[RMDB]
An RNA of 177 nucleotides, treated with DMS and 2A3 and read out base by base. Values cover nucleotides 27 to 126.

RNA sequence: GGGAACGACUCGAGUAGAGUCGAAAAGCUAGCCUGCGCACGAUCUGACUGCCGUGAAGUCUAGCCUGCGUCAGAACUAGUCUCCAUCAAUCAAAGCGCAGGGAUUGAUGUACGAGACUAGUACACAGUGUAAGGACUUGUUCGCAGGUCUUUACACAAAAGAAACAACAACAACAAC
Reactivity to DMS in 0.01 (KOAc 150mM, MgCl2 10mM, bicine 150mM(pH8.5), 24C), signal-to-noise 9, nucleotides 027 to 126: g010c030u000a050g000c020c010u000g010c020g010c020a150c080g010a060u010c050u020g000a070c040u010g010c040c030g000u010g000a070a070g010u010c020u000a070g000c010c010u000g000c080g010u020c070a080g010a080a040c000u000a000g000u000c000u000c000c010a010u000c010a010a010u000c000a050a090a100g010c020g010c020a030g000g000g000a000u000u000g000a010u000g010u070a110c250g000a020g000a000c000u000a000g010u000a050c120a110c170a110
Reactivity to 2A3 in 0.01 (KOAc 150mM, MgCl2 10mM, bicine 150mM(pH8.5), 24C), signal-to-noise 9, nucleotides 027 to 126: g030c020u020a000g010c000c000u000g000c010g000c000a030c030g040a050u020c020u050g070a040c010u020g010c010c010g030u020g050a070a000g040u010c010u010a010g000c000c010u030g020c010g080u060c050a030g020a040a010c000u000a000g000u000c000u000c000c000a000u000c000a000a000u000c010a030a050a020g010c010g000c010a010g000g000g000a000u000u000g000a000u000g010u040a060c070g000a000g000a000c000u000a000g010u040a010c070a000c010a020
For DMS the reverse transcriptase was MarathonRT. The reactions ran in a buffer of 150 mM KOAc, 10 mM MgCl2 and 150 mM bicine (pH 8.5), at 24 C.